[RMDB]
The data come from the RNA Mapping Database (RMDB), library TTRDEL.
The record gives the reactivity of an RNA of 177 nucleotides to 2A3 and DMS.
Conditions: 150 mM KOAc, 10 mM MgCl2 and 150 mM bicine (pH 8.5), 24 C.
Reactivities are given for positions 27 through 126.

RNA sequence: GGGAACGACUCGAGUAGAGUCGAAAAGAUAUGGAGCCACUUUUGACGUCUGGUGGUCGGAAACGACCAGAAGGACGAUAAGUCGGCUCCUAAGUCAAAGUGAAAGAGACUUCGGUCUCUUUCACAAGAGGUAUUGAAACUUCGGUUUCAAUACCUCAAAAGAAACAACAACAACAAC
Reactivity to 2A3 in 0.01 (KOAc 150mM, MgCl2 10mM, bicine 150mM(pH8.5), 24C), signal-to-noise 2, nucleotides 027 to 126: g050a010u060a060u190g010g000a010g000c000c000a000c000u050u050u120u240g300a140c060g010u010c040u070g210g070u030g030g000u080c020g000g000a090a080a050c000g000a000c010c000a010g070a040a000g040g000a000c000g000a010u000a040a000g040u090c170g040g010c020u010c000c000u020a040a000g000u000c040a090a060a050g000u010g000a020a000a000g020a010g010a020c030u120u230c300g010g000u020c010u000c010u000u010u000c000a010c010a000a020
Reactivity to DMS in 0.01 (KOAc 150mM, MgCl2 10mM, bicine 150mM(pH8.5), 24C), signal-to-noise 3, nucleotides 027 to 126: g020a030u010a300u010g010g010a020g020c000c010a020c010u000u000u010u000g020a160c050g010u000c000u000g000g020u000g020g000u000c010g000g000a090a040a180c010g010a010c000c000a010g000a300a230g000g000a000c000g010a090u000a010a020g010u000c160g040g000c010u010c000c000u000a000a070g030u000c040a070a130a120g000u000g040a040a020a000g010a010g000a010c010u010u020c240g060g000u000c010u020c000u000u000u000c000a010c010a050a090